[RMDB]
RNA sequence: GGGAACGACUCGAGUAGAGUCGAAAACUUAUGAAAACGACUAAAUCCGUCAUUACAAUUUUAUUACUCUAAAAGGACUUUGAACACUGUAGCAAAUUACAGUAGUUUGAGUCCUGUUUACAUUAAAAUAGAAAGUAGAGUUCGCUCUACUUUCUAUAAAAGAAACAACAACAACAAC
Reactivity to DMS in 0.01 (KOAc 150mM, MgCl2 10mM, bicine 150mM(pH8.5), 24C), signal-to-noise 4, nucleotides 027 to 126: c050u010u020a070u020g000a080a090a090a090c090g000a040c070u020a060a110a120u020c110c060g000u010c030a050u010u020a090c100a080a070u020u040u010u020a060u020u020a070c100u010c030u000a050a050a070a020g000g000a030c000u000u010u040g030a000a010c000a030c000u000g010u000a000g010c190a040a120a100u040u010a000c000a010g000u000a070g020u000u000u010g000a020g000u010c000c010u000g000u000u000u010a020c100a080u020u030a020a060a090
Reactivity to 2A3 in 0.01 (KOAc 150mM, MgCl2 10mM, bicine 150mM(pH8.5), 24C), signal-to-noise 4, nucleotides 027 to 126: c040u160u080a040u230g100a000a070a060a050c070g020a000c040u100a010a200a060u010c040c010g020u010c050a050u060u150a010c020a020a080u030u110u090u060a180u110u270a110c050u050c010u170a070a180a020a000g010g010a000c010u060u180u300g010a020a000c000a010c000u000g030u000a030g070c120a030a080a140u240u000a000c010a000g000u140a060g010u010u000u000g010a000g000u000c000c000u000g000u000u010u030a010c010a000u090u180a070a060a090